Structure probing data (2A3) for a 207-nucleotide construct. Reactivities are given for positions 27 through 156.

RNA sequence: GGGAACGACUCGAGUAGAGUCGAAAAUGGGGUUCGCCCCACCACUAGAUAUGGAAUUGUACUGCUCUAACUCGUUUGACGGUGAUUCGGAAACGAAUCACCCGAGAGUUAGGGAGGCAGUGACAAUUCCUAAGUCCAACUGCACAUUCGUGUGCAAGGUUACUCUCGUUUUCGAACGAGAGUAACCAAAAGAAACAACAACAACAAC
Reactivity to 2A3 in 0.01 (KOAc 150mM, MgCl2 10mM, bicine 150mM(pH8.5), 24C), signal-to-noise 5, nucleotides 027 to 156: u100g030g000g000g050u090u110c250g190c020c020c000c010a010c000c010a080c110u130a030g010a000u020a000u060g010g010a000a000u000u000g010u010a000c000u000g000c050u040c000u300a010a000c000u000c020g150u150u220u290g010a010c000g000g000u000g000a000u000u000c000g000g000a000a000a010c010g000a000a000u000c000a010c000c000c000g000a010g000a000g010u000u010a000g000g020g020a090g040g000c000a000g010u100g080a050c000a000a000u000u000c000c000u000a000a000g000u000c030c020a090a050c100u060g020c010a000c000a040u080u170c280g120u110g000u000g030c010a020a050